[RMDB]
RNA sequence: GGGAACGACUCGAGUAGAGUCGAAAAAUGACGGGAAUUAUGCAAUUCGUGGUACAGGAAGCGUUAGAAACGAUGCGGUGUUCCGCACGAAGUUGAUCCUGAUUGACGCCGUAAACAACGGUCGCGACAGCCACCACUAGUUCGCUAGUGGUGGCUGAAAAGAAACAACAACAACAAC
Reactivity to DMS in 0.01 (KOAc 150mM, MgCl2 10mM, bicine 150mM(pH8.5), 24C), signal-to-noise 2, nucleotides 027 to 126: a050u000g020a070c090g000g080g020a080a030u050u030a070u050g010c100a020a130u010u010c020g000u000g020g050u030a070c130a070g000g000a050a070g000c040g000u010u020a080g000a130a110a070c090g010a010u020g000c040g000g040u030g000u000u000c000c030g000c030a000c080g020a000a000g000u010u000g000a120u010c020c000u000g000a200u000u040g000a160c190g000c000c000g000u020a070a170a130c220a150a000c010g000g010u010c060g000c040g000a150
Reactivity to 2A3 in 0.01 (KOAc 150mM, MgCl2 10mM, bicine 150mM(pH8.5), 24C), signal-to-noise 2, nucleotides 027 to 126: a000u190g060a040c040g000g000g090a030a000u180u100a020u300g080c000a020a020u050u020c030g050u050g040g030u110a150c020a080g040g000a020a020g070c020g030u010u100a060g060a100a300a000c050g010a060u030g010c040g060g000u080g210u140u000c000c000g010c030a000c000g040a030a050g030u040u070g020a020u020c000c000u030g040a210u000u210g100a070c030g000c020c030g030u070a300a000a040c080a040a040c020g010g190u210c170g070c000g060a000
Structure probing data (DMS and 2A3) for a 177-nucleotide construct. For 2A3 the reverse transcriptase was SuperScript II with manganese. The RNA was probed in 150 mM KOAc, 10 mM MgCl2 and 150 mM bicine (pH 8.5) at 24 C. High DMS reactivity at an A or C suggests that its Watson-Crick edge is free. For DMS the reverse transcriptase was MarathonRT. Source: RMDB library OK1LIB, as collected in RNAgym.